Overview:
An RNA of 177 nucleotides, treated with 2A3 and DMS and read out base by base. High 2A3 reactivity points to a flexible backbone, as in loops and unpaired stretches. The reactions ran in a buffer of 150 mM KOAc, 10 mM MgCl2 and 150 mM bicine (pH 8.5), at 24 C. It was measured as part of the RMDB library TTRDEL.
RNA sequence: GGGAACGACUCGAGUAGAGUCGAAAAGAUAUGGACGACAUCAAUGAUGUACUGAUCGGAAACGAUCAGGUAUUGAGAUGGUCCUAAGUCAAAGAAGGAUGGUUUUCUUCGGAAAACCAUCCUUCAAGACUUAGGCAUAGUUCGCUAUGCCUAAGUCAAAAGAAACAACAACAACAAC
Reactivity to 2A3 in 0.01 (KOAc 150mM, MgCl2 10mM, bicine 150mM(pH8.5), 24C), signal-to-noise 9, nucleotides 027 to 126: g030a010u080a050u140g010g010a010c050g070a090c080a010u020c010a030a240u230g070a050u120g100u210a300c000u000g000a000u000c010g010g030a060a050a030c020g000a000u000c000a000g020g020u060a030u010u130g030a080g000a010u030g040g000u010c000c000u020a140a030g050u030c050a100a040a140g010a000a000g010g000a000u030g010g000u010u000u000u020c020u060u110c300g040g000a000a000a000a000c000c000a000u000c000c000u000u000c000a000a000
Reactivity to DMS in 0.01 (KOAc 150mM, MgCl2 10mM, bicine 150mM(pH8.5), 24C), signal-to-noise 9, nucleotides 027 to 126: g010a040u000a300u010g000g010a020c010g010a210c190a060u000c000a060a100u010g010a090u010g010u010a150c000u000g000a010u000c000g000g000a100a090a160c000g010a010u000c000a000g010g000u000a010u000u000g000a210g000a060u010g010g010u000c000c000u000a050a150g010u000c030a080a100a150g000a010a010g000g010a010u000g000g000u000u000u000u000c000u000u010c230g020g000a010a000a000a000c000c000a000u000c000c000u000u000c000a020a090